[RMDB]
RNA sequence: GGGAACGACUCGAGUAGAGUCGAAAAUAUGACCGUCCCGCCGACGGCCACUCACCAGCCGUGGCCGGGAGUGAUUGCCGCGUACCGUGACCGGCUGCCGGUGGGUGACGACUGGACUCCGGUGACCGUCAACUACCUACUUCGGUAGGUAGUUGACAAAAGAAACAACAACAACAAC
Reactivity to 2A3 in 0.01 (KOAc 150mM, MgCl2 10mM, bicine 150mM(pH8.5), 24C), signal-to-noise 1, nucleotides 027 to 126: u300a140u060g080a020c040c040g060u030c040c000c010g030c000c000g050a020c000g020g030c040c010a010c060u000c010a030c000c030a030g000c020c030g020u020g020g000c000c020g010g060g000a100g020u130g000a160u150u140g050c050c040g030c040g020u130a060c030c000g020u060g050a110c030c040g010g070c010u050g010c050c030g000g020u000g030g020g030u020g020a000c000g020a030c060u150g080g000a020c030u010c060c010g000g060u070g030a070c040c050
Reactivity to DMS in 0.01 (KOAc 150mM, MgCl2 10mM, bicine 150mM(pH8.5), 24C), signal-to-noise 2, nucleotides 027 to 126: u000a050u000g000a090c050c080g030u000c000c030c040g030c110c000g000a050c060g010g000c030c030a050c150u010c020a040c010c040a210g070c120c200g040u000g000g000c070c070g000g010g000a190g000u000g030a160u010u010g010c040c030g030c080g000u010a100c160c220g010u000g030a130c030c020g000g030c000u000g000c040c010g030g000u000g020g010g000u000g000a030c050g050a070c040u000g000g000a070c050u010c070c050g000g010u000g000a080c070c100